[RMDB]
RNA sequence: GGGAACGACUCGAGUAGAGUCGAAAAUGAGGCUUAUAACCACCUAAUCAGAUGAGAACCGCAGAUGAGAAUUUAUUCCUGGCCGCAUCGCAAUCUGGUUAUAAUCUCGCGCUGAUUACAAUGGUCAGGUGCAGCCUGAGUUCGCUCAGGCUGCACCAAAAGAAACAACAACAACAAC
Reactivity to 2A3 in 0.01 (KOAc 150mM, MgCl2 10mM, bicine 150mM(pH8.5), 24C), signal-to-noise 1, nucleotides 027 to 126: u150g000a000g040g040c000u090u110a010u080a300a130c000c000a000c000c000u010a010a000u010c000a000g020a000u030g000a000g000a160a030c040c000g100c020a060g020a190u160g050a050g060a220a170u120u040u270a160u070u150c000c000u030g000g000c000c000g010c060a200u170c000g010c000a000a060u020c000u040g000g000u000u000a000u000a000a060u000c030u000c000g000c000g000c010u020g010a050u030u020a000c040a130a110u180g160g000u010c020a000
Overview:
An RNA of 177 nucleotides, treated with 2A3 and read out base by base. The reactions ran in a buffer of 150 mM KOAc, 10 mM MgCl2 and 150 mM bicine (pH 8.5), at 24 C. The data come from the RNA Mapping Database (RMDB), library OK1LIB.